[RMDB]
The record gives the reactivity of an RNA of 177 nucleotides to DMS and 2A3. For DMS, 2,503 sequencing reads were counted. For DMS the reverse transcriptase was MarathonRT.

RNA sequence: GGGAACGACUCGAGUAGAGUCGAAAAGAAGCGGCACCUGCCUACCAGGCAUCGGCUCCCCCAGGAUGUGAUCAUCGGACCGCUUCCCAGUUCGAUAAGUGCCGGGGCGGACAGCUCUGUCUGACAGCCUAAGUCAAGGCUUCGGCCUUGACUUAGGAAAAGAAACAACAACAACAAC
Reactivity to DMS in 0.01 (KOAc 150mM, MgCl2 10mM, bicine 150mM(pH8.5), 24C), signal-to-noise 2, nucleotides 027 to 126: g000a080a100g000c030g000g020c050a070c060c060u000g000c000c020u020a160c200c090a080g000g030c030a010u040c200g020g010c070u000c000c000c000c040c010a060g010g000a030u020g000u020g010a060u040c130a040u020c020g000g010a080c000c000g000c120u000u000c000c000c000a250g000u000u000c020g010a040u030a000a130g030u020g020c000c020g000g000g000g000c030g000g000a110c120a050g070c100u040c050u000g000u000c010u000g000a150c220a050g000
Reactivity to 2A3 in 0.01 (KOAc 150mM, MgCl2 10mM, bicine 150mM(pH8.5), 24C), signal-to-noise 3, nucleotides 027 to 126: g110a050a000g050c050g030g000c020a050c050c080u040g010c030c000u070a140c060c040a050g020g040c010a080u120c060g060g000c020u050c020c000c000c010c000a010g080g030a140u140g060u110g140a040u120c060a010u000c030g030g000a010c000c030g010c000u010u010c000c000c000a010g000u010u050c000g010a060u040a090a090g080u050g000c020c040g000g000g020g040c030g020g020a020c030a030g010c000u000c020u050g080u030c000u000g050a060c060a030g020